[RMDB]
RNA sequence: GGGAACGACUCGAGUAGAGUCGAAAAGCACAAGUGGGGCCCUGGGGAGGAGGGGAGGUACCAGGGCUGUGCUAAGCAUCACCUUGGGCUCUGGCAGCUCCGAGAUGGACUGACGCAGGUCCUGCCGAACAAUUCGAGUAUUCGUACUCGAAUUGUUAAAAGAAACAACAACAACAAC
Reactivity to DMS in 0.01 (KOAc 150mM, MgCl2 10mM, bicine 150mM(pH8.5), 24C), signal-to-noise 1, nucleotides 027 to 126: g020c050a040c070a070a060g040u010g020g040g040g000c020c020c020u000g000g010g000g020a180g040g000a120g020g000g000g000a080g020g030u000a080c060c010a010g010g000g010c010u010g010u000g000c030u010a120a110g020c100a070u010c080a070c040c060u000u000g000g000g010c020u010c060u010g020g000c050a050g000c100u000c020c000g010a080g000a090u000g010g000a080c020u000g000a140c150g010c030a080g000g010u000c000c000u000g000c110c060g000
Reactivity to 2A3 in 0.01 (KOAc 150mM, MgCl2 10mM, bicine 150mM(pH8.5), 24C), signal-to-noise 1, nucleotides 027 to 126: g060c000a040c020a110a060g060u090g060g080g000g010c010c000c030u020g000g000g000g030a130g050g080a100g000g000g000g000a060g000g060u010a040c000c000a000g030g000g000c080u030g120u020g070c000u010a030a020g030c010a040u060c010a060c000c000u030u040g000g000g000c060u060c020u130g030g040c030a000g000c060u010c010c000g060a090g010a070u180g050g000a020c000u020g010a030c040g020c150a000g020g010u000c000c020u000g020c030c040g000